This 177-nucleotide RNA was probed chemically with DMS and 2A3.
It was measured as part of the RMDB library OK1LIB.
High 2A3 reactivity points to a flexible backbone, as in loops and unpaired stretches.
For 2A3, 3,485 sequencing reads were counted.

RNA sequence: GGGAACGACUCGAGUAGAGUCGAAAAGAGCUCGUUUUCACACUGCCAUGAAAAUGGGGCGGGAAAAACAACAACGAUGCCAACGCACUGCGACAUAAUGGCGUCCACUUUGCGUUUUUAUGCAAAACAGGCUGGAUAAUUUCGAUUAUCCAGCCUGAAAAGAAACAACAACAACAAC
Reactivity to DMS in 0.01 (KOAc 150mM, MgCl2 10mM, bicine 150mM(pH8.5), 24C), signal-to-noise 2, nucleotides 027 to 126: g000a100g020c030u000c020g020u000u010u000u000c000a140c160a120c000u000g000c040c000a090u000g000a010a060a060a060u020g040g010g000g000c050g000g050g010a010a000a020a010a080c040a060a240c200a140a060c200g000a020u060g010c050c010a010a240c010g020c040a010c090u010g010c120g050a080c090a080u030a030a130u070g000g020c020g010u010c020c130a130c130u000u030u000g040c130g040u000u000u010u010u060a040u040g050c080a000a100a040a160
Reactivity to 2A3 in 0.01 (KOAc 150mM, MgCl2 10mM, bicine 150mM(pH8.5), 24C), signal-to-noise 6, nucleotides 027 to 126: g070a010g000c030u020c030g020u010u000u030u000c040a060c030a040c080u180g040c020c020a060u050g080a010a030a050a040u080g050g010g030g030c060g030g000g070a030a070a020a020a000c140a020a010c040a040a040c060g040a000u080g000c000c000a040a040c020g010c030a180c230u250g010c000g080a060c050a080u300a140a180u170g030g010c010g000u010c000c000a090c060u030u030u010g020c010g050u050u030u030u050u140a150u110g030c010a010a000a030a040